[RMDB]
RNA sequence: GGGAACGACUCGAGUAGAGUCGAAAAAGUGGCGUGCCGCAUCUGUCCAGCCGGACUCCAGGGACGCUUGUGCAACGAGUGUGCUCCAGGAUACACCCGCUCAAACAAGCCAGCCGGACGCGUGUGACCGUAAUGCGUGAUUCGUCACGCAUUACGGAAAAGAAACAACAACAACAAC
Reactivity to DMS in 0.01 (KOAc 150mM, MgCl2 10mM, bicine 150mM(pH8.5), 24C), signal-to-noise 2, nucleotides 027 to 126: a130g020u000g000g000c050g020u000g000c040c030g010c050a070u000c070u040g000u020c030c030a110g000c090c090g000g000a090c090u030c060c050a150g010g000g000a110c180g010c010u020u000g020u000g010c180a090a060c060g020a070g030u000g010u000g040c100u000c080c070a060g040g000a110u000a050c060a120c020c000c000g010c050u000c130a050a090a060c060a070a090g010c010c060a120g000c040c030g000g000a060c060g020c120g010u000g020u010g000a200
Reactivity to 2A3 in 0.01 (KOAc 150mM, MgCl2 10mM, bicine 150mM(pH8.5), 24C), signal-to-noise 1, nucleotides 027 to 126: a000g100u060g050g070c140g000u110g010c010c000g000c010a050u050c020u090g030u020c010c000a080g140c070c090g030g000a060c030u000c020c050a040g000g000g070a040c090g000c000u020u000g030u030g120c130a130a030c030g010a020g030u070g020u060g070c020u000c000c040a140g090g000a020u000a190c030a040c000c020c000g050c080u050c030a180a160a100c020a000a000g000c010c020a020g000c010c020g060g010a060c020g010c020g020u100g060u110g100a080

Chemical mapping of a 177-nucleotide RNA with DMS and 2A3.